RNA sequence: GGGAACGACUCGAGUAGAGUCGAAAAUCAAGGGCUGGGCAAGGCGGCUUACCCUGAAAUCCCAGCACUGUGGGAGGCUUAGGUGGGAGGAUCGCUUGAGUCCAGGAGUUCAAGACCAUGUUGAACAACAUGGUGAGACCCCCAUCUCCUUAAAAAAAUAACUAUGUCUGUUCGCAGACAUAGUUAUAAAAGAAACAACAACAACAAC
Reactivity to DMS in 0.01 (KOAc 150mM, MgCl2 10mM, bicine 150mM(pH8.5), 24C), signal-to-noise 1, nucleotides 027 to 156: u000c020a140a100g000g020g030c060u000g020g040g040c050a130a090g040g040c030g000g020c050u000u000a070c010c000c000u000g010a080a150a110u000c010c000c010a070g010c110a050c100u010g020u000g020g030g000a110g000g030c120u000u000a060g020g000u010g000g000g020a110g000g000a190u010c010g040c000u000u000g010a090g020u000c020c060a100g030g020a090g030u000u000c030a080a050g040a120c010c000a010u000g030u000u000g000a180a170c040a040a030c000a020u010g010g010u000g000a180g010a190c000c020c020c000c010a120u000c060u000c020c020u000u010a010a000a010a090a070a080
Reactivity to 2A3 in 0.01 (KOAc 150mM, MgCl2 10mM, bicine 150mM(pH8.5), 24C), signal-to-noise 3, nucleotides 027 to 156: u070c020a070a080g030g030g000c030u020g020g000g000c020a030a030g040g000c030g020g000c010u030u170a140c000c000c000u000g020a080a060a010u040c020c000c000a010g110c130a110c120u260g030u040g150g010g000a020g020g000c060u120u160a030g000g050u100g060g070g000a080g020g030a250u060c000g000c030u050u030g030a020g070u000c000c010a000g000g010a040g000u080u030c050a050a010g040a070c000c000a000u020g040u030u020g140a160a090c080a040a010c000a100u000g000g000u010g010a010g020a010c010c020c030c030c000a080u060c050u060c010c000u070u100a050a180a000a000a220a000